[RMDB]
RNA sequence: GGGAACGACUCGAGUAGAGUCGAAAAGAUAUGGAGCGUAUGGACAUGAUCAUUGGUCGGAAACGACCACCUCGGGAUCAACAGCCAUCACGCUCCUAAGUCAAAGUUUAGAGUUCGCUCUAAACAACUAAGUAAUACCGUUCGCGGUAUUACUUAGAAAAGAAACAACAACAACAAC
Reactivity to 2A3 in 0.01 (KOAc 150mM, MgCl2 10mM, bicine 150mM(pH8.5), 24C), signal-to-noise 7, nucleotides 027 to 126: g000a010u020a020u080g000g000a000g010c020g000u000a010u010g000g030a070c230a300u300g000a020u010c010a040u010u070g000g000u010c000g010g000a010a010a010c000g000a010c000c010a030c020c060u240c220g250g160g020a000u010c050a190a190c060a190g000c010c000a010u030c060a010c010g000c000u000c000c000u000a010a000g000u000c010a090a060a050g000u000u020u030a030g000a010g020u080u190c300g070c110u010c010u000a000a020a010c010a000a010
Reactivity to DMS in 0.01 (KOAc 150mM, MgCl2 10mM, bicine 150mM(pH8.5), 24C), signal-to-noise 6, nucleotides 027 to 126: g000a020u000a070u010g010g000a010g030c000g000u000a010u000g000g010a030c050a300u020g020a010u000c010a170u010u000g010g010u010c000g010g000a010a030a040c010g010a010c000c000a010c300c160u000c210g020g020g000a010u000c010a130a120c180a200g000c000c000a010u000c240a010c000g010c010u000c000c000u000a000a050g010u010c020a130a120a130g000u000u000u000a010g000a010g030u000u020c300g010c010u000c000u000a000a010a000c000a140a280

Structure probing data (2A3 and DMS) for a 177-nucleotide construct. The RNA was probed in 150 mM KOAc, 10 mM MgCl2 and 150 mM bicine (pH 8.5) at 24 C. It was measured as part of the RMDB library TTRDES.